An RNA of 177 nucleotides, treated with 2A3 and DMS and read out base by base. The RNA was probed in 150 mM KOAc, 10 mM MgCl2 and 150 mM bicine (pH 8.5) at 24 C. Reactivities are given for positions 27 through 126. Source: RMDB library OK1LIB, as collected in RNAgym. The 2A3 profile rests on 6,395 reads. DMS adducts were read by reverse transcription with MarathonRT. As a SHAPE reagent, 2A3 marks flexible, mostly unpaired nucleotides at the ribose 2'-OH. For 2A3 the reverse transcriptase was SuperScript II with manganese.
RNA sequence: GGGAACGACUCGAGUAGAGUCGAAAAGUGACGGCAAUGCUGCAGCCAGCUACACCAAGUUCAGCCGCCAGGUCGACACGCUCGGCACCUUCGUCGACUUUGACCUGCUCUGCCAGCGGCAAUGGCACUACUUUCUGUCGUUCGCGACAGAAAGUAGAAAAGAAACAACAACAACAAC
Reactivity to 2A3 in 0.01 (KOAc 150mM, MgCl2 10mM, bicine 150mM(pH8.5), 24C), signal-to-noise 5, nucleotides 027 to 126: g110u080g070a040c020g020g050c060a070a090u120g020c030u040g030c040a050g020c010c010a010g010c020u040a040c040a020c050c020a050a020g030u130u100c040a070g080c000c000g010c020c000a010g000g020u010c010g020a020c020a020c230g050c130u030c000g010g000c020a080c030c080u180u200c110g010u000c010g000a030c010u020u020u030g010a010c010c000u020g020c050u040c070u130g090c050c010a010g010c000g020g010c030a040a030u070g020g000c020a000
Reactivity to DMS in 0.01 (KOAc 150mM, MgCl2 10mM, bicine 150mM(pH8.5), 24C), signal-to-noise 3, nucleotides 027 to 126: g000u000g030a070c080g000g000c050a120a030u010g020c050u030g000c040a160g020c060c060a060g030c070u000a090c100a170c040c040a030a050g000u000u000c110a100g000c030c000g040c060c070a030g010g010u000c020g000a020c260a050c170g000c160u000c020g000g010c000a080c230c120u020u010c160g020u000c000g010a060c010u000u040u010g000a060c050c020u000g030c060u020c050u000g010c030c060a060g020c000g030g000c040a040a020u050g000g020c060a260